[RMDB]
The record gives the reactivity of an RNA of 177 nucleotides to 2A3 and DMS.
The reactions ran in a buffer of 150 mM KOAc, 10 mM MgCl2 and 150 mM bicine (pH 8.5), at 24 C.
2A3 adducts were read by reverse transcription with SuperScript II with manganese.
RNA sequence: GGGAACGACUCGAGUAGAGUCGAAAAAGCGCCAGUACGCUGGCGCAAUGAGUACCGCCAUGUCUGUUGGGCAUCCACAGUCUCCCACCAGGCAUUGUGGUCUCCGCACGCGCGGUACGCCGCGCGAGUAACGAGUCUCAUUCGUGAGACUCGUUACAAAAGAAACAACAACAACAAC
Reactivity to 2A3 in 0.01 (KOAc 150mM, MgCl2 10mM, bicine 150mM(pH8.5), 24C), signal-to-noise 6, nucleotides 027 to 126: a010g000c010g000c010c010a010g000u030a030c300g010c090u000g000g000c000g000c000a000a050u050g000a000g040u120a030c000c000g000c010c010a010u020g000u000c000u010g010u000u020g020g010g020c060a100u120c130c040a160c070a200g070u030c110u040c020c000c000a010c010c010a010g000g000c000a010u010u010g010u010g000g020u000c000u010c000c020g120c010a050c010g000c000g000c010g010g010u050a040c220g010c020c000g000c000g000c000g000a010
Reactivity to DMS in 0.01 (KOAc 150mM, MgCl2 10mM, bicine 150mM(pH8.5), 24C), signal-to-noise 3, nucleotides 027 to 126: a070g010c000g010c000c010a010g000u000a130c300g070c020u000g000g030c000g030c000a020a000u010g010a060g020u040a050c000c000g000c010c040a000u010g030u000c000u000g040u000u000g010g030g000c300a100u040c090c170a080c180a140g060u040c120u030c010c020c000a000c020c000a010g000g000c030a000u010u010g000u000g000g020u010c000u020c000c130g000c150a050c010g000c020g010c010g050g010u040a160c180g030c010c010g020c020g000c000g000a040